[RMDB]
RNA sequence: GGGAACGACUCGAGUAGAGUCGAAAACACCCAUUCGUGGGUGAAUAUGCGUACUACCCAUGACAUGUCUAGGGUCUACCCACCUACAUCCCAAAUAGGAUGUAGAGGACCUUGGGACAACAGCAUGGGUAUCGCUUGCCUAAACCUUCGGGUUUAACCGUUCUCUAAAUUUCGAUUUAGAGAACGGAAAAGAAACAACAACAACAAC
Reactivity to 2A3 in 0.01 (KOAc 150mM, MgCl2 10mM, bicine 150mM(pH8.5), 24C), signal-to-noise 4, nucleotides 027 to 156: c000a000c020c020c000a010u040u050c240g080u040g000g000g010u050g020a030a100u280a090u180g000c020g000u070a140c030u000a000c010c000c000a010u030g060a110c030a140u070g010u000c030u010a020g000g020g000u020c010u040a160c080c080c040a030c010c010u000a000c010a010u010c000c010c030a230a300a070u250a120g010g000a000u000g000u000a000g000a010g000g000a000c000c000u040u030g160g010g000a010c010a040a040c020a020g110c000a000u050g000g020g030u000a000u030c000g000c000u010u090g030c000c010u020a060a020a040c000c020u040u090c240g090g000g020u080u070u100a090a020
Reactivity to DMS in 0.01 (KOAc 150mM, MgCl2 10mM, bicine 150mM(pH8.5), 24C), signal-to-noise 1, nucleotides 027 to 156: c030a000c000c000c000a100u000u040c260g080u010g010g020g010u000g050a020a140u010a020u000g010c000g000u010a170c100u000a030c000c020c000a020u000g000a090c080a300u000g050u000c000u000a050g020g020g020u000c000u000a010c010c000c010a300c180c000u000a020c010a000u000c030c020c000a080a140a260u020a050g010g010a030u000g010u000a000g000a140g000g000a000c010c030u000u010g000g010g000a020c000a030a090c060a180g130c050a000u000g000g020g050u000a000u000c000g000c000u000u000g000c020c070u010a030a010a010c000c000u010u000c300g030g000g010u000u010u000a110a300